[RMDB]
RNA sequence: GGGAACGACUCGAGUAGAGUCGAAAAUCUUUUGAAGACAAAUAUACAUCUGGUAUAACUAGUCGUUCUAAUGAAACUAACCAAGUUGAUACAGAUAACAUUCAUUGUGAAGCUGUAAAAUGUAAAUCAGCAUACCUGAGUUCGCUCAGGUAUGCUGAAAAGAAACAACAACAACAAC
Reactivity to 2A3 in 0.01 (KOAc 150mM, MgCl2 10mM, bicine 150mM(pH8.5), 24C), signal-to-noise 1, nucleotides 027 to 126: u000c050u050u090u120u090g050a000a000g030a000c090a090a030a000u000a000u000a030c160a000u300c210u300g050g000u000a000u000a080a150c210u020a000g000u000c120g300u000u000c000u000a240a050u020g070a000a000a230c070u000a000a000c000c030a100a000g100u000u100g000a020u050a050c000a000g050a000u190a300a000c000a000u070u300c160a280u300u000g000u000g000a020a000g090c020u000g090u090a000a030a050a130u190g000u190a000a120a120u000